[RMDB]
RNA sequence: GGGAACGACUCGAGUAGAGUCGAAAAGAUAUGGACGUUACAGACAUGCGUGGUCGGAAACGAUUGCGCAACAGCUGUGAACGUCCUAAGUCAAACAUCCAAGUCUACUUCGGUAGACUUGGAUGAACGGUACAUUUUAGUUCGCUAAAAUGUACCGAAAAGAAACAACAACAACAAC
Reactivity to DMS in 0.01 (KOAc 150mM, MgCl2 10mM, bicine 150mM(pH8.5), 24C), signal-to-noise 5, nucleotides 027 to 126: g010a020u010a270u010g000g010a010c000g030u000u000a020c000a020g010a080c100a170u000g000c000g030u000g000g020u000c000g000g010a080a050a110c000g010a010u000u010g010c000g020c000a010a030c280a140g010c000u010g000u000g000a020a010c010g010u000c000c000u000a000a040g010u000c020a140a140a260c010a000u000c000c000a000a000g000u000c000u000a000c000u000u020c210g020g000u000a010g000a000c000u000u000g000g000a000u000g000a020a070
Reactivity to 2A3 in 0.01 (KOAc 150mM, MgCl2 10mM, bicine 150mM(pH8.5), 24C), signal-to-noise 5, nucleotides 027 to 126: g010a010u040a020u090g000g000a000c000g000u010u000a030c020a070g220a150c070a240u040g010c000g020u030g010g010u010c010g000g020a020a010a010c000g010a000u010u020g020c010g000c000a030a020c040a040g020c000u020g020u120g170a050a020c000g000u000c000c000u000a010a000g000u000c020a020a060a090c000a010u000c000c000a000a000g000u000c000u000a010c010u050u130c300g110g000u010a000g010a010c000u000u000g000g000a000u000g000a000a010
This 177-nucleotide RNA was probed chemically with DMS and 2A3.
The RNA was probed in 150 mM KOAc, 10 mM MgCl2 and 150 mM bicine (pH 8.5) at 24 C.
2A3 adducts were read by reverse transcription with SuperScript II with manganese.
The 2A3 profile rests on 23,768 reads.
Values cover nucleotides 27 to 126.
Source: RMDB library TTRDEL, as collected in RNAgym.
As a SHAPE reagent, 2A3 marks flexible, mostly unpaired nucleotides at the ribose 2'-OH.
DMS adducts were read by reverse transcription with MarathonRT.